[RMDB]
The record gives the reactivity of an RNA of 207 nucleotides to DMS and 2A3.
RNA sequence: GGGAACGACUCGAGUAGAGUCGAAAAUCGGUUGUUUCUCUGAAGGCAUGAUCACCCCGUCCGAUGCGGAAGUUCGUGCUUCCGUCGAACGCGAAAGUCGGACGGCGGCCAUGAGACGCAACGCAAAUAUACAUUUAGUAGUUCGCUACUAAAUGAACUUUGGUGUAACCUUCGGGUUACACCAAAGAAAAGAAACAACAACAACAAC
Reactivity to DMS in 0.01 (KOAc 150mM, MgCl2 10mM, bicine 150mM(pH8.5), 24C), signal-to-noise 1, nucleotides 027 to 156: u010c010g030g000u000u000g010u000u000u020c010u010c000u000g020a180a150g020g000c010a100u000g010a070u000c200a120c000c000c010c000g030u010c050c000g000a150u010g030c010g000g010a030a030g000u020u000c300g000u000g000c010u000u000c030c000g030u030c050g010a060a200c100g000c080g000a120a160a170g020u000c020g010g010a060c020g010g000c010g030g010c060c010a070u000g000a000g010a050c060g020c020a000a050c010g000c000a080a090a070u000a180u000a130c010a030u000u010u000a000g020u000a000g000u020u000c300g010c020u000a020c010u010a000a010a010u000g000a040a080
Reactivity to 2A3 in 0.01 (KOAc 150mM, MgCl2 10mM, bicine 150mM(pH8.5), 24C), signal-to-noise 3, nucleotides 027 to 156: u150c070g030g000u010u000g010u000u000u000c010u000c010u050g090a270a180g060g010c080a080u110g050a080u180c060a070c030c010c000c000g000u010c000c000g010a010u020g000c010g010g020a010a000g010u140u300c220g150u300g060c000u020u000c000c000g010u010c030g060a130a050c070g000c030g130a080a050a030g020u030c010g010g000a010c000g010g000c030g050g000c020c010a040u070g010a010g010a020c040g000c020a000a030c020g000c030a010a110a000u150a020u030a070c000a000u000u000u000a000g000u000a000g020u000u050c170g000c070u000a000c000u010a000a000a000u000g010a040a040

High 2A3 reactivity points to a flexible backbone, as in loops and unpaired stretches.